This 177-nucleotide RNA was probed chemically with 2A3 and DMS. For DMS the reverse transcriptase was MarathonRT. 2A3 adducts were read by reverse transcription with SuperScript II with manganese.
RNA sequence: GGGAACGACUCGAGUAGAGUCGAAAACAAAGAGAUGCAGAAUGCUAUGGUUUGUUAAUCCGUAGAAUAUUCUUGUGUUUCUGUGUAUCAGUUUGGAAGUGCAUCUGCUUCUGAGAUGCUCAUUUGGUUAAGUGAUGCUAUUCGUAGCAUCACUUAAAAAAGAAACAACAACAACAAC
Reactivity to 2A3 in 0.01 (KOAc 150mM, MgCl2 10mM, bicine 150mM(pH8.5), 24C), signal-to-noise 7, nucleotides 027 to 126: c030a000a100a000g000a000g000a010u010g000c000a000g000a010a000u010g020c000u000a010u010g000g110u030u080u150g240u100u230a090a060u020c000c000g000u010a000g020a130a110u100a020u120u030c090u130u100g010u000g010u010u010u020c020u010g050u000g010u020a100u090c060a080g050u040u130u180g110g030a090a040g020u030g080c040a090u020c030u110g100c030u150u050c030u060g020a020g000a030u010g000c000u000c070a120u060u090u150g120g010
Reactivity to DMS in 0.01 (KOAc 150mM, MgCl2 10mM, bicine 150mM(pH8.5), 24C), signal-to-noise 9, nucleotides 027 to 126: c030a060a070a020g000a010g010a000u000g010c000a010g000a010a010u000g010c000u000a000u010g000g010u010u000u010g010u030u040a090a060u010c000c000g000u000a000g000a070a080u030a010u000u000c010u010u030g060u000g000u000u000u000c000u000g000u010g010u010a070u030c110a110g000u010u020u010g010g010a060a060g010u010g000c060a030u000c060u010g010c100u010u010c120u020g000a040g000a010u000g010c010u000c050a090u010u010u010g010g010